[RMDB]
RNA sequence: GGGAACGACUCGAGUAGAGUCGAAAACGACCCCGACACCUUCAGGGAUCUGUCCAAGCCCAUUGGCGCGCUGAGCCCCAGGCGCUUCAGGGACUUCAUGGAGCGCUACAGGGAGCAGAAGGCAAGCUACGAAGUUUCUAUUCGUAGAAACUUCGUAAAAAGAAACAACAACAACAAC
Reactivity to DMS in 0.01 (KOAc 150mM, MgCl2 10mM, bicine 150mM(pH8.5), 24C), signal-to-noise 5, nucleotides 027 to 126: c160g000a100c030c000c000c010g000a060c160a090c080c060u000u000c060a110g000g000g000a050u000c030u000g000u000c040c050a090a080g010c030c000c020a200u010u000g000g010c100g020c150g020c030u000g000a120g010c000c000c000c030a210g000g000c000g010c000u000u010c000a020g000g010g010a160c210u000u010c060a090u000g010g000a020g000c000g010c000u000a050c090a150g000g010g010a080g020c010a030g010a080a080g010g010c060a070a180g010c160
Reactivity to 2A3 in 0.01 (KOAc 150mM, MgCl2 10mM, bicine 150mM(pH8.5), 24C), signal-to-noise 3, nucleotides 027 to 126: c010g070a050c000c020c000c010g040a040c030a080c060c040u140u110c030a030g020g030g010a100u080c070u080g070u030c010c030a040a010g040c020c000c000a050u050u110g020g020c010g000c010g000c050u040g020a020g000c010c010c000c000a030g010g040c000g000c050u010u000c000a030g000g060g140a180c030u210u080c180a110u030g000g000a010g000c010g020c020u030a070c060a100g000g020g070a110g020c000a010g030a100a010g060g000c040a040a010g020c010